The record gives the reactivity of an RNA of 177 nucleotides to 2A3 and DMS.
The DMS profile rests on 4,563 reads.
The reactions ran in a buffer of 150 mM KOAc, 10 mM MgCl2 and 150 mM bicine (pH 8.5), at 24 C.
For DMS the reverse transcriptase was MarathonRT.
RNA sequence: GGGAACGACUCGAGUAGAGUCGAAAACUGUGACCUAGAAAUACCGUGUCUUCUUGAAAGAAAGUGAAUUUACUGUUACAAAUUCUUCGACCAAUAUCUGUUUUUAGGAUAGCUUGACAAAGGGAGGCUUGUGCCUCUAAUUCGUUAGAGGCACAAGAAAAGAAACAACAACAACAAC
Reactivity to 2A3 in 0.01 (KOAc 150mM, MgCl2 10mM, bicine 150mM(pH8.5), 24C), signal-to-noise 3, nucleotides 027 to 126: c020u040g050u050g090a040c000c000u030a030g100a020a080a010u100a090c020c050g070u060g020u080c010u070u000c010u040u160g120a190a080a030g080a070a080a010g050u030g030a040a080u070u100u090a060c060u120g050u200u040a070c040a030a120a050u090u020c020u040u060c040g070a060c020c040a050a050u040a060u130c030u020g100u060u090u040u070u100a030g010g000a010u030a020g070c050u050u060g030a020c020a020a050a060g060g010g010a030g050g000
Reactivity to DMS in 0.01 (KOAc 150mM, MgCl2 10mM, bicine 150mM(pH8.5), 24C), signal-to-noise 5, nucleotides 027 to 126: c100u010g000u000g010a120c020c040u010a050g020a090a070a050u000a070c080c060g000u010g010u000c020u000u010c050u010u000g010a090a070a060g000a050a100a110g000u000g010a060a050u000u010u010a070c120u010g000u010u000a080c060a040a090a120u000u000c040u000u000c050g010a080c070c050a070a110u010a030u000c050u010g000u000u000u000u000u000a090g010g010a050u000a040g000c040u000u000g000a060c100a040a090a100g010g010g010a080g010g000